The record gives the reactivity of an RNA of 170 nucleotides to 2A3 and DMS. The RNA was probed in 150 mM KOAc, 10 mM MgCl2 and 150 mM bicine (pH 8.5) at 24 C. For 2A3, 73,893 sequencing reads were counted.
RNA sequence: GGGAACGACUCGAGUAGAGUCGAAAACAUGGUCCCAGCCUCCUCGCUGGCGCCGGCUGGGCAACAUUCCGAGGGGACCGUCCCCUCGGUAAUGGCGAAUGGGACCCAGAACUCUCUCUAGAUUCCCGGCCAUCCGUGUUCGCACGGAUGAAAAGAAACAACAACAACAAC
Reactivity to 2A3 in 0.01 (KOAc 150mM, MgCl2 10mM, bicine 150mM(pH8.5), 24C), signal-to-noise 9, nucleotides 027 to 129: c050a120u190g010g000u040c000c000c000a010g020c000c020u070c010c020u090c080g030c040u060g070g020c040g060c040c020g030g010c020u050g010g010g010c010a020a010c010a020u030u000c000c000g000a000g010g010g000g020a070c060c050g300u300c010c000c000c000u000c010g000g000u010a000a010u030g020g010c050g100a090a070u110g010g000g020a030c010c010c010a030g030a050a030c000u000c000u000c000u000c000u010a020g000a110u010u000c000c000c000g010g020c010
Reactivity to DMS in 0.01 (KOAc 150mM, MgCl2 10mM, bicine 150mM(pH8.5), 24C), signal-to-noise 7, nucleotides 027 to 129: c170a090u000g000g000u000c000c000c000a070g030c020c020u060c080c050u010c130g050c000u000g060g010c180g000c050c050g010g040c040u030g010g010g020c060a120a060c050a030u020u020c030c010g010a030g010g010g030g000a160c150c250g120u120c030c010c000c030u030c020g030g000u020a000a010u000g030g040c070g050a100a050u000g000g000g000a020c000c000c020a000g000a100a070c040u010c020u030c030u050c020u000a060g020a290u020u040c000c000c000g000g000c130